[RMDB]
RNA sequence: GGGAACGACUCGAGUAGAGUCGAAAAGCCGGACAGUCUGCCGCCGGUGGAGUGGCUGACCUACGGCAGCGGCUAUCUUGCGGGCAUGAAGCUGGGCGGGACGCCGCUGCUGGAGUUCACGCGCGACCAGUAUCCCGGGAUUCGUCCCGGGAUACUGAAAAGAAACAACAACAACAAC
Reactivity to 2A3 in 0.01 (KOAc 150mM, MgCl2 10mM, bicine 150mM(pH8.5), 24C), signal-to-noise 4, nucleotides 027 to 126: g030c010c020g010g020a040c010a050g070u050c040u130g050c020c030g040c020c010g070g040u120g050g030a140g020u090g060g020c030u020g010a020c020c020u070a030c010g000g000c000a000g000c000g020g000c010u040a110u130c000u030u040g010c030g040g000g010c040a110u290g200a170a070g000c030u120g030g290g010c020g000g000g000a000c010g000c000c000g000c000u010g000c000u010g000g010a020g010u030u030c030a050c090g020c010g010c010g020a040c020
Reactivity to DMS in 0.01 (KOAc 150mM, MgCl2 10mM, bicine 150mM(pH8.5), 24C), signal-to-noise 2, nucleotides 027 to 126: g010c040c000g000g010a060c040a140g000u040c040u000g000c140c080g030c040c050g020g000u000g020g010a120g040u000g030g000c060u000g020a020c060c010u000a030c010g000g000c000a000g020c000g000g010c000u030a230u030c000u010u020g010c000g000g000g000c040a160u040g020a180a150g030c020u000g020g040g070c000g000g000g000a030c300g000c020c010g040c030u010g000c000u040g010g000a010g000u040u000c020a040c160g000c010g050c030g000a160c080